[RMDB]
This 177-nucleotide RNA was probed chemically with DMS. The RNA was probed in 150 mM KOAc, 10 mM MgCl2 and 150 mM bicine (pH 8.5) at 24 C. The data come from the RNA Mapping Database (RMDB), library TTRDEL. In probing experiments dimethyl sulfate is read out at A N1 and C N3, which are open when not base-paired.

RNA sequence: GGGAACGACUCGAGUAGAGUCGAAAAGAUAUGGAGCGGGACAUGCCAACAGCUCGGAAACGAGACAUGGCGUGUCCACGCUCCUAAGUCAAAGGUCGACGGCAAGGUUCGCCUUGCCGUCGACCAAGGUAUCUGAAGAGUUCGCUCUUCAGAUACCAAAAGAAACAACAACAACAAC
Reactivity to DMS in 0.01 (KOAc 150mM, MgCl2 10mM, bicine 150mM(pH8.5), 24C), signal-to-noise 1, nucleotides 027 to 126: g000a050u010a300u010g020g000a020g010c000g000g000g020a000c000a000u000g010c000c000a030a050c270a120g000c000u000c000g000g010a070a040a210c000g030a010g000a040c130a240u000g000g020c000g040u010g000u010c010c000a010c000g010c000u010c010c000u010a010a110g000u030c040a050a160a130g010g040u010c020g040a000c000g060g000c000a040a000g010g010u000u000c190g000c000c000u000u010g000c040c000g040u000c000g000a010c000c000a000a020